[RMDB]
RNA sequence: GGGAACGACUCGAGUAGAGUCGAAAAGAGGAGAUUGAGUUUUGCAACAACUUGACUAAGACUGUUUCAGAGAACCCAUUACCACUCAGCUGUUGGUCUGAAGUUCAAAAUUACAUUGAAGACAUAGCACAGGAGAAUACUUCGGUAUUCUCCUGUGAAAAGAAACAACAACAACAAC
Reactivity to 2A3 in 0.01 (KOAc 150mM, MgCl2 10mM, bicine 150mM(pH8.5), 24C), signal-to-noise 1, nucleotides 027 to 126: g070a060g040g050a040g010a040u020u010g020a070g140u020u080u110u130g110c030a040a020c000a080a030c080u090u080g020a050c020u070a000a090g000a070c030u020g000u080u080u000c060a050g000a000g030a210a030c000c100c010a000u030u040a050c000c000a040c010u070c010a000g030c020u030g030u210u010g040g000u000c010u000g070a030a030g020u030u100c030a130a010a040a070u160u040a040c070a050u080u120g090a060a000g050a030c070a090u130a060g050
Reactivity to DMS in 0.01 (KOAc 150mM, MgCl2 10mM, bicine 150mM(pH8.5), 24C), signal-to-noise 2, nucleotides 027 to 126: g000a070g010g000a100g010a110u000u000g010a060g010u000u000u010u010g010c130a070a060c130a060a150c080u020u000g000a070c060u000a090a050g000a060c070u010g020u000u010u000c070a050g000a200g020a060a120c090c000c020a090u030u000a090c070c030a070c060u000c040a030g010c050u000g010u000u000g010g010u000c000u000g000a090a110g010u000u010c050a020a070a060a070u000u000a050c140a090u020u010g000a090a060g010a110c100a060u010a050g000
Chemical mapping of a 177-nucleotide RNA with 2A3 and DMS.
The RNA was probed in 150 mM KOAc, 10 mM MgCl2 and 150 mM bicine (pH 8.5) at 24 C.
The 2A3 profile rests on 675 reads.
For 2A3 the reverse transcriptase was SuperScript II with manganese.